[RMDB]
RNA sequence: GGGAACGACUCGAGUAGAGUCGAAAACGCUAGCAACAAACAUAUUUUAUGUACCUCACGUGUUUGACUUAAUCAUUUACUGGUUAAAGUCUGUUCAGUGCAAUCGUAGGACUUCUAAGCAAUUAGUUUAACUGACAAAUUUCGAUUUGUCAGUUAAAAAAGAAACAACAACAACAAC
Reactivity to DMS in 0.01 (KOAc 150mM, MgCl2 10mM, bicine 150mM(pH8.5), 24C), signal-to-noise 6, nucleotides 027 to 126: c100g010c050u000a040g020c100a100a050c140a070a090a080c050a040u010a060u020u010u010u010a050u010g000u000a130c050c030u000c110a040c060g010u010g000u010u010u010g010a040c010u000u000a020a010u000c010a010u010u020u030a100c250u000g000g010u000u010a030a050a050g010u000c010u000g000u010u010c110a070g000u010g010c080a050a060u010c040g000u010a080g010g000a060c040u000u010c030u010a040a040g000c110a070a100u000u000a050g010u010
Reactivity to 2A3 in 0.01 (KOAc 150mM, MgCl2 10mM, bicine 150mM(pH8.5), 24C), signal-to-noise 9, nucleotides 027 to 126: c030g030c050u050a020g050c050a040a100c040a090a150a020c030a050u120a190u070u150u120u130a110u120g030u080a120c010c020u060c020a040c030g030u040g060u080u180u140g010a010c000u000u020a020a000u010c010a040u130u120u230a140c170u030g010g010u030u020a120a040a030g000u000c010u040g050u080u080c050a060g050u020g090c030a020a060u080c050g020u020a030g000g040a020c010u080u030c020u070a070a050g040c040a070a190u090u030a090g050u000
An RNA of 177 nucleotides, treated with DMS and 2A3 and read out base by base. The reactions ran in a buffer of 150 mM KOAc, 10 mM MgCl2 and 150 mM bicine (pH 8.5), at 24 C. For 2A3 the reverse transcriptase was SuperScript II with manganese. In probing experiments dimethyl sulfate is read out at A N1 and C N3, which are open when not base-paired.